Notes:
The record gives the reactivity of an RNA of 177 nucleotides to DMS. Reactivities are rounded to 0.1 and cut off at 0 and 3. High DMS reactivity at an A or C suggests that its Watson-Crick edge is free.

RNA sequence: GGGAACGACUCGAGUAGAGUCGAAAAGAUAUGGAUGAUCGAAGCCGAUAAGAGGCAGUCGGAAACGACUGGCCUCUUUUGACGGCUGAGAUCAUCCUAAGUCAAAAGACGCUGUUCGCAGCGUCAAGCAAUAUCGUAGCUUCGGCUACGAUAUUGCAAAAGAAACAACAACAACAAC
Reactivity to DMS in 0.01 (KOAc 150mM, MgCl2 10mM, bicine 150mM(pH8.5), 24C), signal-to-noise 2, nucleotides 027 to 126: g000a020u000a300u000g000g010a000u010g020a000u000c010g000a300a050g030c000c020g080a220u000a020a010g030a020g000g010c000a040g010u000c010g000g000a060a100a130c000g000a030c000u020g020g010c020c000u010c000u000u000u010u000g010a140c130g010g000c000u000g000a300g010a000u000c040a000u000c000c000u010a020a150g000u010c040a060a040a100a160g000a060c000g010c050u000g000u010u010c250g010c000a020g000c010g030u020c020a030a200